[RMDB]
RNA sequence: GGGAACGACUCGAGUAGAGUCGAAAAACAUGCUGGCCAACCCAACCCCACGAUCCUCCAUCGGCAUGAUCAUGAUGUGUUCUCAAAUAUCAGGCCAGUAAAUGACCAUGCUCGUGCUGGUAAAGGCAACUUAUGCCCAAGUUCGCUUGGGCAUAAAUAACAUCCAAUUCUUCGGAAUUGGAUGUUAAAAAGAAACAACAACAACAAC
Reactivity to 2A3 in 0.01 (KOAc 150mM, MgCl2 10mM, bicine 150mM(pH8.5), 24C), signal-to-noise 2, nucleotides 027 to 156: a000c040a010u050g010c020u010g000g030c000c020a050a040c070c020c040a040a050c010c020c010c070a060c020g030a120u090c000c020u040c030c020a060u050c040g010g020c000a010u000g020a010u020c010a000u030g010a010u040g060u050g030u120u030c050u000c030a050a140a010u190a110u160c120a090g000g010c020c000a000g000u020a020a070a050u110g020a010c030c000a010u010g000c020u010c050g030u010g020c020u050g000g080u040a080a110a030g050g000c030a070a030c040u040u000a000u000g000c000c000c030a000a000g000u040u060c030g000c130u000u010g000g000g000c000a000u000a000a000a000
Reactivity to DMS in 0.01 (KOAc 150mM, MgCl2 10mM, bicine 150mM(pH8.5), 24C), signal-to-noise 2, nucleotides 027 to 156: a090c020a140u000g010c010u000g000g050c000c030a120a190c120c050c080a130a140c030c010c020c010a100c180g010a180u010c020c010u000c040c040a070u010c060g020g000c010a030u010g010a010u020c010a030u000g020a090u000g020u000g010u000u000c030u000c030a070a070a160u010a120u010c080a120g020g020c000c020a030g000u000a010a080a070u000g000a030c010c010a020u010g020c040u000c050g040u000g010c020u000g010g000u000a020a050a070g010g010c070a070a060c080u000u000a010u000g000c030c000c020a030a040g020u000u020c300g030c000u030u010g030g000g000c000a000u000a000a010a130

Chemical mapping of a 207-nucleotide RNA with 2A3 and DMS.
DMS adducts were read by reverse transcription with MarathonRT.
The RNA was probed in 150 mM KOAc, 10 mM MgCl2 and 150 mM bicine (pH 8.5) at 24 C.
In probing experiments dimethyl sulfate is read out at A N1 and C N3, which are open when not base-paired.
The data come from the RNA Mapping Database (RMDB), library M2RFOK.